[RMDB]
An RNA of 177 nucleotides, treated with 2A3 and read out base by base. The data come from the RNA Mapping Database (RMDB), library OK1LIB. For 2A3, 373 sequencing reads were counted. The reactions ran in a buffer of 150 mM KOAc, 10 mM MgCl2 and 150 mM bicine (pH 8.5), at 24 C.
RNA sequence: GGGAACGACUCGAGUAGAGUCGAAAAAGCUCAGAGUACAAUGCGUUUGCAGAGCAGCUUUGGAACAUUGGUAGUAAAAGUGCAUUCGCGCUAAUCAUUCCAAUUUUAUCUGGAUUCAUUGCACGUAAUUGCGCCUCAACUUCGGUUGAGGCGCAAUAAAAGAAACAACAACAACAAC
Reactivity to 2A3 in 0.01 (KOAc 150mM, MgCl2 10mM, bicine 150mM(pH8.5), 24C), signal-to-noise 1, nucleotides 027 to 126: a000g080c000u000c000a000g000a010g030u040a000c040a000a000u000g100c000g110u000u010u120g300c010a000g010a000g020c000a040g000c000u150u000u000g030g030a000a000c000a210u000u000g100g030u030a000g010u000a080a040a040a040g000u160g000c050a080u120u300c130g000c000g010c040u040a000a000u210c000a070u000u230c000c000a000a030u120u040u100u140a180u110c000u000g000g000a060u030u030c000a000u000u000g000c130a000c000g020u230a150